The record gives the reactivity of an RNA of 207 nucleotides to 2A3. The reactions ran in a buffer of 150 mM KOAc, 10 mM MgCl2 and 150 mM bicine (pH 8.5), at 24 C.
RNA sequence: GGGAACGACUCGAGUAGAGUCGAAAAAGGCACUUCGCAAUGUGUGCUCCAACAUUGCUUAUUCAAACACGCUUCACAAUGUGCGACAAAGAAACAUUGUUAUAAGAGCUAAUGUUUUAACAUUGGCAAAACCGAGUUAGCUUCGGCUAACUCGGAAGAGCGCGAAGUAGUUCGCUACUUCGCGCUCAAAAGAAACAACAACAACAAC
Reactivity to 2A3 in 0.01 (KOAc 150mM, MgCl2 10mM, bicine 150mM(pH8.5), 24C), signal-to-noise 1, nucleotides 027 to 156: a000g300g000c080a030c040u060u040c000g000c000a000a000u000g030u000g020u010g040c070u010c020c000a000a000c010a000u010u010g020c040u180u120a240u230u130c100a040a130a110c110a000c160g000c000u090u080c000a000c040a000a000u000g000u000g040c000g010a010c150a100a150a030g020a040a000a000c000a000u000u000g010u020u070a110u060a050a120g120a020g050c000u000a000a000u000g010u000u110u130u170a070a000c000a000u000u000g010g000c000a030a030a030a030c000c000g030a000g000u000u000a000g000c030u050u030c220g060g010c000u000a000a000c000u000c000g000g000a000a000

2A3 adducts were read by reverse transcription with SuperScript II with manganese. The 2A3 profile rests on 507 reads. It was measured as part of the RMDB library M2RFPK.